[RMDB]
RNA sequence: GGGAACGACUCGAGUAGAGUCGAAAAUUCAUGCAAGUCCGCUUGCACGAUCUGAUCCGCAUCAACAAAUAUGACGCGGUCUACGUUAAGUGGGAAAAGAACGUCAAGGAAGAGAAUCUUGUAGGCCCGCUAUUACUAGGUUCGCCUAGUAAUAGCGAAAAGAAACAACAACAACAAC
Reactivity to 2A3 in 0.01 (KOAc 150mM, MgCl2 10mM, bicine 150mM(pH8.5), 24C), signal-to-noise 6, nucleotides 027 to 126: u030u010c010a020u070g010c010a020a010g040u020c020c030g040c070u030u020g010c120a010c030g020a050u000c040u060g030a050u050c010c010g000c020a030u020c020a030a140c050a070a210a040u260a080u160g010a000c020g000c020g020g020u000c010u010a010c010g030u060u110a140a050g020u030g020g040g020a040a130a020a040g020a040a010c020g010u020c040a020a020g060g030a200a130g080a040g030a070a060u060c010u020u020g010u020a020g020g040c010c020
Reactivity to DMS in 0.01 (KOAc 150mM, MgCl2 10mM, bicine 150mM(pH8.5), 24C), signal-to-noise 5, nucleotides 027 to 126: u000u010c030a090u000g000c010a010a020g010u000c070c060g010c010u000u000g010c200a030c010g010a050u000c040u010g010a080u010c010c000g020c010a050u000c020a050a090c180a120a120a140u020a100u000g000a010c060g010c000g000g000u010c010u000a020c020g010u000u010a080a140g010u010g000g000g000a080a070a070a020g000a030a090c010g010u000c030a010a030g010g010a100a130g010a110g000a040a070u000c020u000u000g010u000a040g000g000c010c020